Background: The data come from the RNA Mapping Database (RMDB), library M2RFPK. An RNA of 207 nucleotides, treated with 2A3 and read out base by base. For 2A3, 1,436 sequencing reads were counted.
RNA sequence: GGGAACGACUCGAGUAGAGUCGAAAAAGCUGGUAGUACUACGGUACUACCAGUAUAAUUCGUGGUUCGAAAACCUCCCACGCAAAAAAACUAAGGAAAAACGCCGAGUAGUACGCUACUCGGCGAAGGUACCGGAAUCAGUUCGCUGAUUCCGGAAGUAUGAACUAAAGUUCGCUUUAGUUCAUACAAAAGAAACAACAACAACAAC
Reactivity to 2A3 in 0.01 (KOAc 150mM, MgCl2 10mM, bicine 150mM(pH8.5), 24C), signal-to-noise 2, nucleotides 027 to 156: a000g010c000u000g000g000u010a000g030u000a000c020u010a010c180g090g000u010a000c000u000a000c000c000a000g000u000a000u010a000a070u040u050c020g000u030g000g020u030u130c070g050a070a100a130a210c010c020u030c020c020c000a030c010g040c030a050a080a050a080a040a050a060c060u130a050a160g050g040a100a080a060a020a000c010g000c000c000g000a000g000u010a010g000u010a000c130g000c050u000a000c000u000c010g000g000c000g000a000a000g010g000u040a030c000c000g000g020a000a000u010c000a010g040u060u080c170g000c120u000g000a000u000u000c000c000g000g000a000a000